[RMDB]
RNA sequence: GGGAACGACUCGAGUAGAGUCGAAAACGCUAGGGGAUGCCUGUAAACCCGAAACGACUGUCAGAUAGAACAGGAUCGCCGCCAAGUUCGCUGUAGACGUAACGGCUAAAACUCAUACAGCUCGCUCCAAGCACCCUGCCACUCGGGCGGCGCGGAGGGUUUAUCUAAUCUUCGGAUUAGAUAAACCAAAAGAAACAACAACAACAAC
Reactivity to DMS in 0.01 (KOAc 150mM, MgCl2 10mM, bicine 150mM(pH8.5), 24C), signal-to-noise 2, nucleotides 027 to 156: c010g030c020u010a300g000g040g000g010a090u000g000c000c000u000g020u010a010a080a200c000c010c000g020a130a100a090c010g000a130c070u020g020u020c080a160g020a260u000a100g010a110a060c020a020g000g010a100u000c080g010c000c010g040c020c010a190a260g010u010u000c010g000c020u000g020u000a030g000a060c040g010u000a140a110c000g010g010c010u010a070a040a080a150c150u030c060a120u000a010c060a020g030c020u000c090g010c030u000c000c000a060a190g000c020a070c020c000c000u020g020c040c110a120c100u000c050g000g010g050c040g030g020c040g000c170g030g010a100g020
Reactivity to 2A3 in 0.01 (KOAc 150mM, MgCl2 10mM, bicine 150mM(pH8.5), 24C), signal-to-noise 3, nucleotides 027 to 156: c040g000c060u050a040g030g000g000g000a020u150g010c010c000u030g010u030a110a140a080c000c020c020g020a150a080a010c020g130a080c060u140g080u200c040a040g070a290u200a070g080a140a020c010a000g000g040a010u020c000g000c010c000g000c010c000a070a010g000u010u010c070g000c000u000g010u010a000g000a000c000g020u070a020a010c000g000g000c000u000a000a000a020a030c080u090c090a030u010a000c010a000g000c020u020c040g020c000u030c000c010a030a040g010c010a080c010c010c000u110g050c060c050a120c090u150c050g050g000g030c080g050g000c030g010c010g000g010a010g010
The record gives the reactivity of an RNA of 207 nucleotides to DMS and 2A3. The RNA was probed in 150 mM KOAc, 10 mM MgCl2 and 150 mM bicine (pH 8.5) at 24 C. DMS (dimethyl sulfate) methylates the pairing face of unpaired adenines and cytosines. The 2A3 profile rests on 2,019 reads. DMS adducts were read by reverse transcription with MarathonRT.